[RMDB]
RNA sequence: GGGAACGACUCGAGUAGAGUCGAAAAGUGAAGACGAACCAUCGACUGCCGUGUUCCUUUUCCUCUUGGAGGUUGGAGUCCCCUGGGCGCCCCCACACGGCUAGACGCCUCGGCUGGUUCGCGACGCAUCUUGGUAUUAGUUCGCUAAUACCAAGAUAAAAGAAACAACAACAACAAC
Reactivity to DMS in 0.01 (KOAc 150mM, MgCl2 10mM, bicine 150mM(pH8.5), 24C), signal-to-noise 9, nucleotides 027 to 126: g010u020g010a080a150g000a120c010g010a030a020c020c010a060u000c030g010a090c080u010g000c020c010g000u000g000u000u000c020c010u010u010u010u010c010c010u010c060u020u020g030g010a040g010g010u010u010g000g010a140g000u000c020c010c060c080u010g000g010g020c050g010c030c010c010c020c040a110c030a030c020g000g000c010u010a040g010a110c140g010c130c100u000c050g000g000c160u000g000g000u000u000c010g010c020g010a170c110g010c100
Reactivity to 2A3 in 0.01 (KOAc 150mM, MgCl2 10mM, bicine 150mM(pH8.5), 24C), signal-to-noise 9, nucleotides 027 to 126: g140u130g070a070a010g100a080c010g000a020a010c010c000a030u050c020g040a030c040u040g010c010c000g020u010g040u050u090c020c000u060u060u060u060c030c010u070c060u080u120g150g020a050g040g030u060u080g040g020a040g050u050c010c000c000c020u070g020g020g000c020g030c000c010c010c010c000a010c000a000c010g000g000c000u020a020g060a080c060g090c030c020u030c020g040g000c090u020g000g000u010u010c010g000c010g010a020c040g010c040